[RMDB]
RNA sequence: GGGAACGACUCGAGUAGAGUCGAAAAAUUCUAGCGUUCUGUUCGCACCAUCAAUAACUAGAUGAAGGGACCGUAUUGGUUCAGGUUGGGUCGCUUCUGAUGUAGUACAACUAACUUGGGAUGAUGAAGGCUAAUAAUGAUUCGUCAUUAUUAGCCUAAAAGAAACAACAACAACAAC
Reactivity to 2A3 in 0.01 (KOAc 150mM, MgCl2 10mM, bicine 150mM(pH8.5), 24C), signal-to-noise 3, nucleotides 027 to 126: a010u090u020c030u050a040g010c010g050u070u000c090u100g090u050u070c050g030c040a040c020c010a030u040c040a080a130u130a220a060c050u060a040g040a110u100g020a060a020g040g000g010a000c020c020g080u140a160u060u220g170g030u100u120c060a000g010g080u070u110g160g020g000u010c030g010c170u020u000c000u050g030a040u100g020u030a040g020u020a040c050a080a040c080u090a010a090c030u040u060g100g000g010a060u100g030a020u050g080a060
Reactivity to DMS in 0.01 (KOAc 150mM, MgCl2 10mM, bicine 150mM(pH8.5), 24C), signal-to-noise 6, nucleotides 027 to 126: a100u000u000c020u000a100g020c080g010u000u000c060u000g020u000u000c080g010c060a120c080c010a030u010c060a090a080u000a090a080c090u000a070g000a120u010g000a100a080g010g000g010a020c000c010g010u010a090u010u000g010g010u000u000c090a040g010g010u000u000g010g020g000u000c040g000c020u000u000c010u010g000a150u000g010u000a050g010u000a090c130a060a070c080u000a050a070c090u010u000g010g000g020a080u010g010a080u000g010a110